RNA sequence: GGGAACGACUCGAGUAGAGUCGAAAAUGUGCGUCGGCUCGAGCGAGUGGAAAUGGGGUCAGCACAUUCCCCUGCCUUGGCCCAAAGACCGUGUACUUGUCGUUGGGCGUCGCUGGCGCUGCAUUCGCGAAGGCCAGAAUGAAGAAGAACGCGUCGCAUUACGACAUCAAUUCGUUGAUGUCGUAAUAAAAGAAACAACAACAACAAC
Reactivity to 2A3 in 0.01 (KOAc 150mM, MgCl2 10mM, bicine 150mM(pH8.5), 24C), signal-to-noise 5, nucleotides 027 to 156: u050g020u010g010c010g070u060c040g030g020c010u030c050g050a060g040c030g010a020g010u090g040g070a060a130a120u160g010g010g000g010u030c050a030g060c040a030c020a060u090u120c010c000c000c010u030g040c000c020u090u110g130g000c030c000c000a000a030a010g020a010c010c070g090u080g090u250a170c160u100u190g020u010c000g030u030u010g000g000g000c010g020u060c040g000c060u080g020g000c080g000c060u040g000c010a040u020u030c000g000c000g040a060a020g010g000c020c030a020g070a020a070u170g020a020a090g040a020a040g030a040a020c020g020c020g060u040c060g010c030
Reactivity to DMS in 0.01 (KOAc 150mM, MgCl2 10mM, bicine 150mM(pH8.5), 24C), signal-to-noise 3, nucleotides 027 to 156: u000g030u010g020c060g010u000c080g020g020c000u000c030g010a300g010c020g010a080g040u000g030g030a080a070a110u000g010g010g030g020u000c040a140g050c010a110c060a150u000u000c010c000c010c010u000g060c000c010u000u010g030g030c000c000c000a030a020a060g000a040c030c150g000u000g040u000a080c100u010u000g010u000c000g010u000u010g020g000g050c000g000u000c020g020c040u010g010g000c060g000c020u010g000c010a060u010u000c020g060c010g020a200a060g010g020c010c050a300g000a050a080u000g010a080a100g000a130a120g000a080a100c070g000c030g000u000c040g010c090
About this RNA: Chemical mapping of a 207-nucleotide RNA with 2A3 and DMS. 2A3 adducts were read by reverse transcription with SuperScript II with manganese. As a SHAPE reagent, 2A3 marks flexible, mostly unpaired nucleotides at the ribose 2'-OH. For DMS the reverse transcriptase was MarathonRT.